Notes: An RNA of 207 nucleotides, treated with 2A3 and DMS and read out base by base. It was measured as part of the RMDB library OK3TST. Reactivities are given for positions 27 through 156. The reactions ran in a buffer of 150 mM KOAc, 10 mM MgCl2 and 150 mM bicine (pH 8.5), at 24 C. For DMS, 6,374 sequencing reads were counted.
[RMDB]
RNA sequence: GGGAACGACUCGAGUAGAGUCGAAAAGGAGAUUUAGUCGUAGUCGACACUACUAGUCUGAAUACGUUACAAGUGGAUGGAAUGUGUGUGUUAUCCGAUGUAUCGUGUGAACGUUUGGAUGUGGUGGACGUGUCAUGUAGUUAUCUGGACUUGAGCGUCACACUCCAUUGUUCGCAAUGGAGUGUGAAAAAGAAACAACAACAACAAC
Reactivity to 2A3 in 0.01 (KOAc 150mM, MgCl2 10mM, bicine 150mM(pH8.5), 24C), signal-to-noise 6, nucleotides 027 to 156: g060g030a070g010a040u080u090u150a040g030u050c040g010u020a030g040u060c080g050a020c020a010c050u090a010c000u040a020g050u000c030u060g030a050a030u060a060c050g040u080u060a050c060a110a050g030u040g080g020a020u020g040g080a110a120u070g040u020g010u000g000u010g010u100u110a030u050c030c040g010a010u040g030u030a060u060c070g020u030g040u040g120a060a030c070g020u000u050u090g080g000a080u050g020u010g060g100u010g030g000a040c020g020u020g050u010c020a030u070g020u030a040g030u050u090a090u060c070u080g030g000a020c000u020u040g010a010g020c020g010
Reactivity to DMS in 0.01 (KOAc 150mM, MgCl2 10mM, bicine 150mM(pH8.5), 24C), signal-to-noise 3, nucleotides 027 to 156: g010g000a090g010a100u010u000u010a090g010u000c040g030u020a120g010u010c060g030a110c050a100c040u000a060c060u000a140g020u010c010u010g000a070a050u000a070c050g020u000u010a100c030a050a130g060u000g030g000a060u000g020g010a060a060u000g010u000g020u000g030u010g030u010u000a090u000c010c020g010a150u000g010u010a040u000c040g050u010g010u010g000a100a050c070g000u000u020u000g030g010a140u000g030u010g040g000u010g020g010a060c040g010u010g000u000c040a060u000g020u000a080g010u000u000a060u000c040u010g010g030a070c040u000u000g000a300g010c050g000